[RMDB]
RNA sequence: GGGAACGACUCGAGUAGAGUCGAAAAGUUUACGCUCCAAGAUCGGUGGAUAGCAGCCCUAUCAAUAUCUAGGAGAACUGUGCUAUGGUUAGAAGAUUAGGUAGUCUCUAAACAGAACAAUUUACCUCAUACGUUAGGACGUUCGCGUCCUAACGAAGACCAAUUCUCGGUUCGCCGAGAAUUGGUCAAAAGAAACAACAACAACAAC
Reactivity to 2A3 in 0.01 (KOAc 150mM, MgCl2 10mM, bicine 150mM(pH8.5), 24C), signal-to-noise 3, nucleotides 027 to 156: g020u060u090u090a060c030g000c020u020c010c010a040a040g010a060u070c110g070g200u080g090g020a040u010a050g040c090a030g030c020c010c010u020a020u030c010a030a100u030a010u190c020u040a070g000g010a030g040a050a060c110u100g050u090g010c030u030a020u060g020g010u020u010a050g050a240a020g010a100u090u030a020g010g040u030a010g020u000c000u000c010u040a030a050a050c060a060g050a070a000c070a070a040u120u030u050a020c000c010u070c070a070u060a120c010g000u000u010a000g010g000a010c000g000u030u030c130g000c020g070u000c000c000u000a000a000c000g000a000a000
Chemical mapping of a 207-nucleotide RNA with 2A3.